[RMDB]
Structure probing data (2A3 and DMS) for a 177-nucleotide construct. The DMS profile rests on 2,731 reads. The reactions ran in a buffer of 150 mM KOAc, 10 mM MgCl2 and 150 mM bicine (pH 8.5), at 24 C.
RNA sequence: GGGAACGACUCGAGUAGAGUCGAAAAGUGGAAUGAGUUAUGGAACUGUGGACUUCUCGAAGGCUUCAAUUUCCACGACACUUAAAACCAUGGAGAGUGUUAUUGCCGCCGCGAAUCCAGUCGGAGAGCUAUAAAAUCGGUUCGCCGAUUUUAUAGCAAAAGAAACAACAACAACAAC
Reactivity to 2A3 in 0.01 (KOAc 150mM, MgCl2 10mM, bicine 150mM(pH8.5), 24C), signal-to-noise 2, nucleotides 027 to 126: g060u020g020g010a100a070u100g000a120g110u110u120a080u190g020g000a050a000c010u030g030u030g060g080a040c000u080u000c040u050c200g070a100a020g020g000c000u040u030c040a020a190u080u060u040c020c010a000c040g020a010c000a020c010u030u080a060a030a020a030c060c010a020u030g020g070a090g010a050g090u070g030u080u060a080u120u070g000c030c040g010c010c010g060c010g010a000a000u080c010c010a020g110u130c060g000g130a110g000a000
Reactivity to DMS in 0.01 (KOAc 150mM, MgCl2 10mM, bicine 150mM(pH8.5), 24C), signal-to-noise 3, nucleotides 027 to 126: g000u010g000g010a130a060u010g000a100g010u000u000a130u000g010g000a020a040c150u000g020u000g000g000a070c060u000u000c040u000c240g010a050a080g000g010c010u010u000c030a050a090u010u000u000c010c010a020c070g000a070c050a060c040u000u000a030a080a120a160c100c030a050u000g010g020a140g010a060g010u000g000u000u010a080u000u000g010c050c030g010c040c010g000c040g000a050a070u000c040c020a080g000u010c060g010g000a110g010a160